Chemical mapping of a 177-nucleotide RNA with DMS and 2A3. It was measured as part of the RMDB libraries RFM100 and RFMREP. DMS (dimethyl sulfate) methylates the pairing face of unpaired adenines and cytosines.
RNA sequence: GGGAACGACUCGAGUAGAGUCGAAAAGAAAGAAAGAUUUGGGUAAUGUAUAAACAACAGGAAUGUUAUGUACAGUAUACAGAUAAUUCUAUAUGUAACGUUUUUGUUGUCCUAAAUUACUCUACAAAAGAAGUAACUCAUUCGUGAGUUACUUCUUAAAAGAAACAACAACAACAAC
Reactivity to DMS in 0.01 (KOAc 150mM, MgCl2 10mM, bicine 150mM(pH8.5), 24C), signal-to-noise 6, nucleotides 027 to 126: g020a100a090a100g010a120a100a110g010a150u010u020u010g000g000g010u010a030a010u000g000u010a090u040a150a170a030c010a000a000c000a000g000g000a000a010u000g000u000u000a010u000g000u000a000c040a020g010u010a070u040a100c230a140g020a170u030a060a040u010u020c000u000a090u000a000u000g000u000a000a000c000g000u000u000u000u000u000g000u000u000g000u000c040c110u010a040a050a020u010u000a010c030u000c010u000a080c210a070a050
Reactivity to 2A3 in 0.01 (KOAc 150mM, MgCl2 10mM, bicine 150mM(pH8.5), 24C), signal-to-noise 6, nucleotides 027 to 126: g080a030a030a000g120a050a100a040g100a100u180u160u230g000g010g000u020a000a020u020g110u090a100u080a190a070a000c000a000a000c000a010g000g010a000a000u000g000u000u000a000u000g010u000a010c010a010g020u040a040u030a120c110a060g220a110u230a130a070u170u010c010u020a030u000a000u010g000u000a010a000c010g000u000u000u000u000u000g000u000u000g000u020c000c000u020a020a040a010u000u010a000c010u020c010u020a050c060a020a170